RNA sequence: GGGAACGACUCGAGUAGAGUCGAAAAACUAGUAUGUACACGAUGAGACUGCCGUGUCGUUUAGACUGCGGAUCCAAUAAUCUCAGAUCUGCGAGAUAUUGUCUCAAGAGUACGAGACAAGUACUCAGAGUAAUGACUACUUCGGUGGUCGUUACUCAAAAGAAACAACAACAACAAC
Reactivity to 2A3 in 0.01 (KOAc 150mM, MgCl2 10mM, bicine 150mM(pH8.5), 24C), signal-to-noise 9, nucleotides 027 to 126: a000c030u040a020g120u060a070u170g070u060a030c050a010c050g040a050u100g010a000g020a020c010u020g010c020c000g010u020g020u010c010g000u010u010u070a040g010a020c020u030g000c030g020g000a000u000c020c010a050a040u130a050a050u040c030u000c050a030g020a170u000c010u030g020c020g020a020g010a030u070a040u050u060g000u000c000u000c010a030a010g040a020g050u050a030c050g020a020g060a090c100a140a030g020u020a030c010u010c040a020
Reactivity to DMS in 0.01 (KOAc 150mM, MgCl2 10mM, bicine 150mM(pH8.5), 24C), signal-to-noise 9, nucleotides 027 to 126: a060c030u010a070g010u010a050u020g010u010a030c040a090c050g000a160u020g010a040g000a030c020u010g000c030c020g000u000g010u000c010g010u010u010u040a040g010a060c040u020g000c100g000g000a030u010c100c160a080a090u050a020a060u010c060u000c060a080g000a070u020c060u010g000c050g000a040g000a050u010a040u010u010g000u000c000u000c000a010a070g000a060g010u000a010c020g010a100g000a060c120a050a060g010u010a050c010u000c020a170